[RMDB]
RNA sequence: GGGAACGACUCGAGUAGAGUCGAAAACACCGCAGCAAUAACAGGUUGAGUUAUCUCAACACAAAGUAAUAACCGUUAAGGGUGUAGCCUAUGAUCAACACAAAUAUGAAAUAUUGGUCCUGGAUGGUAAGCACUGGUAAUUCGUUACCAGUGCUUAAAAAGAAACAACAACAACAAC
Reactivity to 2A3 in 0.01 (KOAc 150mM, MgCl2 10mM, bicine 150mM(pH8.5), 24C), signal-to-noise 5, nucleotides 027 to 126: c040a030c020c020g020c010a020g030c010a050a120u080a110a050c030a050g030g080u000u020g010a000g040u170u200a160u160c010u000c010a010a010c040a010c000a070a090a030g080u100a040a100u130a060a050c030c040g030u120u110a100a100g040g010g000u050g050u050a010g020c010c010u050a060u170g020a030u030c010a040a090c020a020c050a190a140a030u180a050u100g140a050a100a030u180a050u050u080g000g000u030c000c040u040g040g030a100u090g030g050
Reactivity to DMS in 0.01 (KOAc 150mM, MgCl2 10mM, bicine 150mM(pH8.5), 24C), signal-to-noise 6, nucleotides 027 to 126: c070a080c020c030g030c120a120g000c120a110a060u010a080a050c130a150g000g010u000u000g020a030g020u030u050a130u050c010u010c020a030a030c010a090c120a070a060a110g030u030a060a050u010a090a080c120c050g010u000u020a080a090g020g000g040u000g010u010a110g010c020c010u000a040u010g010a070u000c040a020a040c170a090c170a060a060a080u050a120u030g000a050a050a120u010a060u000u010g000g010u000c010c060u000g000g000a060u000g010g010